This 177-nucleotide RNA was probed chemically with DMS and 2A3. It was measured as part of the RMDB library TTRDES. The reactions ran in a buffer of 150 mM KOAc, 10 mM MgCl2 and 150 mM bicine (pH 8.5), at 24 C.

RNA sequence: GGGAACGACUCGAGUAGAGUCGAAAAGAUAUGGAAUCCGGUAGACAUGCUACCUUGUCGGAAACGACAGCGUAGCAACAGCUACCCGGAUUCCUAAGUCAAAGCGCGUUCGUUCGCGAACGCGCAAGUACGUACGAUUGUUCGCAAUCGUACGUACAAAAGAAACAACAACAACAAC
Reactivity to DMS in 0.01 (KOAc 150mM, MgCl2 10mM, bicine 150mM(pH8.5), 24C), signal-to-noise 2, nucleotides 027 to 126: g000a050u000a250u020g000g000a020a000u000c000c000g010g050u010a020g020a040c140a230u010g000c000u000a010c000c010u000u000g020u000c020g020g020a050a060a130c010g010a020c000a010g010c300g000u010a010g010c010a040a030c300a180g000c000u000a000c090c030c130g030g020a000u000u000c010c000u000a000a080g000u000c030a150a110a120g000c010g020c000g000u010u010c000g040u000u010c280g020c050g000a010a010c010g030c000g040c010a010a020
Reactivity to 2A3 in 0.01 (KOAc 150mM, MgCl2 10mM, bicine 150mM(pH8.5), 24C), signal-to-noise 2, nucleotides 027 to 126: g010a020u040a040u070g010g000a000a000u000c000c000g010g020u010a010g050a130c120a280u300g010c010u010a000c000c030u020u130g000u000c010g010g040a030a030a030c010g020a000c010a000g020c070g030u010a010g020c020a020a040c080a050g010c000u000a000c030c060c000g000g010a000u000u000c000c000u010a000a010g010u000c040a110a070a090g000c000g010c000g040u040u000c060g000u050u160c300g000c000g180a000a000c010g030c020g060c010a000a000